[RMDB]
RNA sequence: GGGAACGACUCGAGUAGAGUCGAAAAGAUAUGGACCAGCUUUUGACGGAAGAGGGUCGGAAACGACCUGGCUUCCGAUAAGCUGUGUCCUAAGUCAAAGUCUCUAUAGCUUCGGCUAUAGAGACAACGAUCCUAGUUACUUCGGUAACUAGGAUCGAAAAGAAACAACAACAACAAC
Reactivity to 2A3 in 0.01 (KOAc 150mM, MgCl2 10mM, bicine 150mM(pH8.5), 24C), signal-to-noise 2, nucleotides 027 to 126: g030a030u060a050u130g020g010a000c000c010a020g020c070u050u100u120u110g300a160c060g000g010a000a000g010a020g020g010g000u000c000g010g020a070a080a020c010g000a000c000c000u020g140g170c000u010u000c010c000g000a000u000a010a000g020c010u000g060u080g000u000c000c010u000a110a010g030u000c050a140a130a000g010u030c000u010c000u000a000u010a000g030c010u040u040c300g050g030c000u010a000u000a010g000a000g000a000c000a000a000
Reactivity to DMS in 0.01 (KOAc 150mM, MgCl2 10mM, bicine 150mM(pH8.5), 24C), signal-to-noise 3, nucleotides 027 to 126: g000a020u000a300u010g010g000a020c010c000a010g000c010u000u010u000u020g030a230c100g010g010a020a000g020a300g000g010g000u000c000g000g000a020a080a290c000g000a000c000c000u020g020g010c020u000u010c000c010g010a040u010a000a000g010c000u000g000u020g000u000c000c000u000a020a080g010u000c090a090a070a130g000u000c000u000c000u000a000u000a010g000c000u000u000c240g020g010c000u000a000u000a000g000a000g000a010c010a020a070

Source: RMDB library TTRDEL, as collected in RNAgym. An RNA of 177 nucleotides, treated with 2A3 and DMS and read out base by base. 2A3 adducts were read by reverse transcription with SuperScript II with manganese. For DMS, 2,027 sequencing reads were counted.